This 177-nucleotide RNA was probed chemically with 2A3 and DMS. Reactivities are given for positions 27 through 126. DMS adducts were read by reverse transcription with MarathonRT. The data come from the RNA Mapping Database (RMDB), library TTRDES. The reactions ran in a buffer of 150 mM KOAc, 10 mM MgCl2 and 150 mM bicine (pH 8.5), at 24 C. 2A3 adducts were read by reverse transcription with SuperScript II with manganese.
RNA sequence: GGGAACGACUCGAGUAGAGUCGAAAAGAUAUGGACCGUAGUUGGGAGAGGUGCUUCGGAAACGAAGCAUACCUCGAGGAUCAACACACGGUCCUAAGUCAAACUGUGCCUCUUCGGAGGCACAGAAUCUAUUCAAUACGUUCGCGUAUUGAAUAGAAAAAGAAACAACAACAACAAC
Reactivity to 2A3 in 0.01 (KOAc 150mM, MgCl2 10mM, bicine 150mM(pH8.5), 24C), signal-to-noise 5, nucleotides 027 to 126: g000a000u020a010u050g000g000a000c010c000g030u070a070g010u040u010g020g010g010a040g000a000g010g050u010g000c000u000u000c010g000g000a010a000a010c000g000a000a000g010c010a020u140a050c000c000u000c000g010a090g010g000a010u010c000a000a010c040a010c010a010c130g010g000u000c000c010u000a000a000g000u000c020a060a080a180c000u010g000u000g000c000c010u010c020u060u080c300g230g000a000g010g000c000a000c000a000g000a000a010
Reactivity to DMS in 0.01 (KOAc 150mM, MgCl2 10mM, bicine 150mM(pH8.5), 24C), signal-to-noise 7, nucleotides 027 to 126: g000a020u000a030u010g000g010a010c000c000g030u000a080g020u000u000g000g000g010a010g020a020g020g010u000g000c000u000u000c000g020g000a010a020a030c000g010a020a010g000c010a030u000a040c050c000u000c000g000a070g030g000a030u010c000a010a010c020a080c230a130c020g000g000u000c000c000u000a000a060g000u000c010a180a130a260c010u010g010u000g010c000c000u000c000u010u020c240g020g000a010g010g000c000a000c000a010g010a070a110